Notes
Source: RMDB library OK1LIB, as collected in RNAgym. An RNA of 177 nucleotides, treated with 2A3 and read out base by base.
RNA sequence: GGGAACGACUCGAGUAGAGUCGAAAAUAAUGAGAUGCACUUCGUCUACCACCACCAUGCCAAUGGUUUCCAGUUUGCCCUGCUCCAUCAGCUUGUUCACAAUGGAGUUCGCCUUCUCAAUUGUGCACAGCUCGUCGAUGUUCGCAUCGACGAGCUGAAAAGAAACAACAACAACAAC
Reactivity to 2A3 in 0.01 (KOAc 150mM, MgCl2 10mM, bicine 150mM(pH8.5), 24C), signal-to-noise 1, nucleotides 027 to 126: u300a040a200u200g070a050g000a110u030g020c000a000c040u050u000c000g110u000c020u000a070c030c030a090c000c000a010c000c000a020u080g140c000c020a030a020u070g000g000u020u000u000c010c000a040g000u000u060u070g050c000c020c000u040g050c070u000c000c000a020u000c000a020g010c140u160u170g070u140u070c020a020c080a070a140u010g000g000a010g020u010u010c020g020c000c010u080u030c000u000c000a000a070u010u130g010u000g080c040a030
For 2A3, 460 sequencing reads were counted.